[RMDB]
RNA sequence: GGGAACGACUCGAGUAGAGUCGAAAAGUAGAAAGAGGAUUAUUCAAAAUCUGAUGAGUAGUUGUGACCUCAGAUGUAAAUGGGUGUGGCUUAUAUCACAUGGAUGAACUGAGGUAGCUGAUAGAUGUUUGAGGUGUGAGUCUGCAGAUUUUGUGCACCAUCAGUGAUGGUUCGCCAUCACUGAUGGAAAAGAAACAACAACAACAAC
Reactivity to 2A3 in 0.01 (KOAc 150mM, MgCl2 10mM, bicine 150mM(pH8.5), 24C), signal-to-noise 5, nucleotides 027 to 156: g090u090a030g060a050a080a010g080a030g040g030a060u080u110a090u150u170c050a050a050a050a080u010c060u050g030a090u090g040a070g020u060a010g010u040u050g030u040g030a010c020c000u020c020a000g000a050u100g040u150a030a110a120u100g010g020g020u020g000u010g040g030c060u170u130a080u040a020u230c050a030c000a110u060g090g020a070u040g040a070a030c040u020g000a000g000g000u000a030g000c010u010g010a030u040a070g050a020u060g060u050u050u080g060a030g000g010u030g010u010g010a020g010u000c040u040g000c010a020g000a080u060u030u070u100g030u060g010c040a030
Reactivity to DMS in 0.01 (KOAc 150mM, MgCl2 10mM, bicine 150mM(pH8.5), 24C), signal-to-noise 2, nucleotides 027 to 156: g030u000a080g010a070a130a090g030a130g020g030a140u000u000a060u010u000c060a080a060a100a070u010c040u010g010a160u010g000a110g030u000a120g030u010u000g000u000g000a110c040c020u000c010a050g000a120u030g020u000a060a080a160u000g050g010g040u000g010u010g010g020c070u000u030a110u000a110u010c060a030c060a070u000g010g010a180u000g000a080a100c040u000g000a030g010g020u000a060g000c070u010g020a150u000a060g010a060u020g010u000u000u030g020a040g000g020u000g030u000g020a090g030u010c040u010g010c030a140g010a170u010u000u000u000g040u000g010c140a150